[RMDB]
RNA sequence: GGGAACGACUCGAGUAGAGUCGAAAAGCUUAAUACGGCUAGCCUCUGCACCGAUGGGCCUUAACGUCGGGUCUGGCAACAGACAGCAGAGUCAUUAGCAAGGAUCGCGUUCUGUAGGGUCACUUUACAGAACGUUAAACAAUAGGUGACUCGCCUGGCUCAGUGUGACGUUCGCGUCACACUGAGCAAAAGAAACAACAACAACAAC
Reactivity to 2A3 in 0.01 (KOAc 150mM, MgCl2 10mM, bicine 150mM(pH8.5), 24C), signal-to-noise 1, nucleotides 027 to 156: g030c040u040u020a060a010u130a240c170g050g000c030u010a030g050c000c000u000c010u010g000c020a020c010c000g000a020u030g000g070g020c020c000u080u120a070a010c010g010u000c000g000g010g000u020c000u010g030g020c010a020a030c010a020g000a000c010a010g000c000a000g000a000g010u080c070a150u050u130a010g050c030a020a010g050g030a050u030c030g000c000g020u010u000c000u000g000u000a020g000g010g000u110c020a050c050u030u010u000a010c000a000g020a000a000c010g000u000u030a040a020a000c050a070a130u030a010g000g000u010g000a010c020u030c060g070c010c070u080g010

Record summary:
Chemical mapping of a 207-nucleotide RNA with 2A3. The data come from the RNA Mapping Database (RMDB), library RSTRND. The RNA was probed in 150 mM KOAc, 10 mM MgCl2 and 150 mM bicine (pH 8.5) at 24 C. Reactivities are given for positions 27 through 156.